[RMDB]
RNA sequence: GGGAACGACUCGAGUAGAGUCGAAAAUUGGCAAAGCACUUUACUUUUUGAAGUGUCCUGCGCGCCCACGACAGCCCUUGAAAAUCCUGGCUAGAGAUUUAUUCGCACCCUCGUUCGUACUCAUAACAAUUCCCUCGCUAUUCGUAGCGAGGGAAUUAAAAGAAACAACAACAACAAC
Reactivity to DMS in 0.01 (KOAc 150mM, MgCl2 10mM, bicine 150mM(pH8.5), 24C), signal-to-noise 1, nucleotides 027 to 126: u020u020g010g030c110a040a010a180g000c000a020c000u000u000u000a050c190u070u000u000u030u000g000a050a030g050u030g000u020c050c080u010g000c110g030c000g040c000c010c000a050c010g000a140c100a160g010c090c000c060u010u030g000a000a060a020a150u020c060c000u030g020g080c010u030a090g020a070g000a100u000u000u000a010u030u010c040g000c020a120c030c000c000u000c000g000u020u040c030g070u040a030c050u050c040a050u110a100a160c280
Reactivity to 2A3 in 0.01 (KOAc 150mM, MgCl2 10mM, bicine 150mM(pH8.5), 24C), signal-to-noise 2, nucleotides 027 to 126: u030u120g030g040c020a000a080a060g030c000a010c010u080u000u060a230c050u050u260u220u120u160g080a060a000g000u000g010u100c010c070u090g010c020g020c030g000c000c000c000a000c020g010a000c000a020g020c000c000c000u000u000g030a030a040a030a000u070c000c000u050g020g030c040u090a090g030a000g020a160u000u050u090a110u100u200c040g000c020a030c010c010c000u010c010g000u000u020c030g010u000a010c070u070c020a150u040a170a100c000
The record gives the reactivity of an RNA of 177 nucleotides to DMS and 2A3. DMS (dimethyl sulfate) methylates the pairing face of unpaired adenines and cytosines. Source: RMDB library RFM100, as collected in RNAgym. DMS adducts were read by reverse transcription with MarathonRT. Reactivities are given for positions 27 through 126.